Chemical mapping of a 177-nucleotide RNA with 2A3 and DMS.
The DMS profile rests on 948 reads.
The reactions ran in a buffer of 150 mM KOAc, 10 mM MgCl2 and 150 mM bicine (pH 8.5), at 24 C.
Source: RMDB library RFMREP, as collected in RNAgym.
RNA sequence: GGGAACGACUCGAGUAGAGUCGAAAAAUAGUACCUGAAACCGUGCGCUUACAAUCCGUCAGAGCCUGCGCCACUUUGGUGGGUGGGUGAUGGCGUGCCUUUUGAAGAAUGAGCCUGCGAGUUAGCGGAGUAACAAGAUCUUCGGAUCUUGUUACUCAAAAGAAACAACAACAACAAC
Reactivity to 2A3 in 0.01 (KOAc 150mM, MgCl2 10mM, bicine 150mM(pH8.5), 24C), signal-to-noise 1, nucleotides 027 to 126: a010u160a040g030u050a030c010c000u010g020a060a020a010c000c000g010u030g000c040g010c000u020u010a030c020a050a040u030c060c000g000u010c010a010g010a000g030c000c000u020g030c110g300c010c000a010c030u220u110u300g240g030u020g000g000g000u000g010g020g000u060g010a020u000g030g000c010g000u000g010c040c000u140u300u080u170g080a070a030g020a060a020u050g000a010g000c020c030u030g000c050g030a110g020u070u040a070g070c130g070
Reactivity to DMS in 0.01 (KOAc 150mM, MgCl2 10mM, bicine 150mM(pH8.5), 24C), signal-to-noise 2, nucleotides 027 to 126: a130u020a060g020u030a100c000c000u000g040a080a100a120c040c000g010u000g010c300g020c050u040u000a060c050a070a040u000c070c000g010u000c020a020g010a300g000c000c010u000g010c000g020c010c020a010c020u020u000u010g040g000u010g000g000g010u000g000g020g060u000g010a220u000g000g000c000g040u010g000c300c070u000u010u000u000g020a100a080g010a130a080u020g000a040g010c000c050u000g020c010g030a080g020u000u000a090g000c160g000